[RMDB]
RNA sequence: GGGAACGACUCGAGUAGAGUCGAAAAGAAAAGAAAAAUAAGCGUCGAAGCAGUGAAAAAUUGCGGAGAAGUGCUGUGAAGACUCUCAGCGUUUUAGAGGAUGAGACGCGACUCUAAAGAAAGAAAAGGCAAUGAUAUACUUCGGUAUAUCAUUGCCAAAAGAAACAACAACAACAAC
Reactivity to 2A3 in 0.01 (KOAc 150mM, MgCl2 10mM, bicine 150mM(pH8.5), 24C), signal-to-noise 2, nucleotides 027 to 126: g060a000a130a000a000g080a000a110a040a030a020u200a110a010g000c060g010u010c090g080a040a000g000c010a000g030u060g160a000a030a130a000a000u220u220g000c040g090g050a080g030a090a000g030u040g080c000u000g000u010g150a110a000g100a010c020u000c000u000c040a010g040c020g060u000u000u000u030a020g000a000g030g030a020u030g180a020g000a050c000g030c010g000a000c010u000c000u000a070a090a000g060a040a100a000g110a040a060a030a000
Reactivity to DMS in 0.01 (KOAc 150mM, MgCl2 10mM, bicine 150mM(pH8.5), 24C), signal-to-noise 1, nucleotides 027 to 126: g040a110a030a090a070g000a050a060a120a270a090u070a140a100g010c050g040u000c010g020a200a200g020c000a000g050u040g000a000a080a080a080a050u000u040g010c000g000g000a070g030a060a050g000u020g000c040u020g010u050g000a050a010g000a160c090u040c000u000c040a020g000c020g010u000u000u000u000a060g000a100g000g000a060u000g000a300g000a000c010g000c000g000a120c000u060c040u000a000a030a060g010a110a010a030g050a050a110a160a110

An RNA of 177 nucleotides, treated with 2A3 and DMS and read out base by base. For DMS the reverse transcriptase was MarathonRT. Conditions: 150 mM KOAc, 10 mM MgCl2 and 150 mM bicine (pH 8.5), 24 C. 2A3 adducts were read by reverse transcription with SuperScript II with manganese. The 2A3 profile rests on 1,151 reads. Source: RMDB library OK1LIB, as collected in RNAgym.